[RMDB]
RNA sequence: GGGAACGACUCGAGUAGAGUCGAAAAUUAAAGUCUCUUAGUAGGUGGUGGCAACAAGCUGUGGGAGUGUGAGGAGAGGAACUGCAUGGCAAGCAAAGGUUGUCAUAUCAUGAAGAUAAAGUCUCUAAGGUAGCAAUCCUCAGAAGAACACGUGAAACACUCAUACGGUGUUCGCACCGUAUGAGUGAAAAGAAACAACAACAACAAC
Reactivity to DMS in 0.01 (KOAc 150mM, MgCl2 10mM, bicine 150mM(pH8.5), 24C), signal-to-noise 1, nucleotides 027 to 156: u010u000a150a110a070g030u000c060u000c030u020u010a070g000u010a060g000g020u010g030g010u000g000g040c010a010a050c050a030a130g020c030u000g030u000g010g010g050a110g070u010g030u010g000a070g050g040a090g010a100g020g020a050a070c060u000g030c090a080u020g020g000c040a060a050g020c080a050a080a100g010g000u000u000g030u000c010a090u000a030u010c030a060u010g000a030a070g020a160u000a010a110a050g000u000c000u000c020u000a070a030g050g000u000a030g000c220a070a100u000c030c040u000c000a020g000a030a060g020a070a070c030a090c100g000u000g000a070a100a200
Reactivity to 2A3 in 0.01 (KOAc 150mM, MgCl2 10mM, bicine 150mM(pH8.5), 24C), signal-to-noise 2, nucleotides 027 to 156: u100u040a040a070a030g030u020c010u040c000u100u090a080g030u040a030g090g010u010g000g030u040g010g000c030a070a010c050a080a080g000c020u040g040u100g040g030g000a030g030u140g000u030g070a070g000g010a060g010a010g010g070a050a040c010u020g020c040a050u020g020g000c030a000a010g000c040a090a110a080g200g010u040u030g060u030c000a010u090a050u060c050a060u140g120a020a010g030a050u090a120a060a030g060u000c030u000c000u030a050a070g040g020u010a000g070c000a040a050u050c010c000u000c020a010g010a060a000g020a070a000c050a010c060g070u100g010a040a010a120

Source: RMDB library OK3TST, as collected in RNAgym. Structure probing data (DMS and 2A3) for a 207-nucleotide construct. Values cover nucleotides 27 to 156. The 2A3 profile rests on 1,110 reads. 2A3 adducts were read by reverse transcription with SuperScript II with manganese.